[RMDB]
RNA sequence: GGGAACGACUCGAGUAGAGUCGAAAAUCCAGAAAAGACAAGAUGAGAAAGUGCAGUAUUGACUGUCUUCAAACGCACCUGUCCUUGCUCAAGUGCUGGGAUUGUGUGCCAACGGCUAUGAUAGAUACACUAGGGAAUAGUUCGCUAUUCCCUAGUGAAAAGAAACAACAACAACAAC
Reactivity to 2A3 in 0.01 (KOAc 150mM, MgCl2 10mM, bicine 150mM(pH8.5), 24C), signal-to-noise 5, nucleotides 027 to 126: u000c010c000a040g120a030a170a010a000g080a040c080a050a040g040a160u170g020a020g090a170a110a030g090u160g110c020a000g010u080a130u160u250g250a050c010u020g000u030c000u040u010c050a050a070a060c040g000c000a000c010c000u010g000u000c000c000u000u010g010c010u050c160a230a130g140u070g100c010u010g000g000g030a030u010u050g040u020g000u020g070c020c000a050a020c030g020g000c040u070a060u190g060a130u090a130g060a040u090a070
Reactivity to DMS in 0.01 (KOAc 150mM, MgCl2 10mM, bicine 150mM(pH8.5), 24C), signal-to-noise 6, nucleotides 027 to 126: u000c000c000a180g000a080a040a070a050g010a070c050a070a110g020a120u000g010a200g010a060a050a070g030u010g000c040a030g020u000a150u000u020g020a090c050u000g010u010c030u000u000c060a060a110a100c250g000c010a000c010c010u000g000u000c010c000u000u000g010c000u000c180a110a130g020u000g020c010u000g010g000g000a010u000u000g000u010g020u000g010c000c100a040a040c110g010g000c100u010a060u000g000a120u010a080g010a130u010a160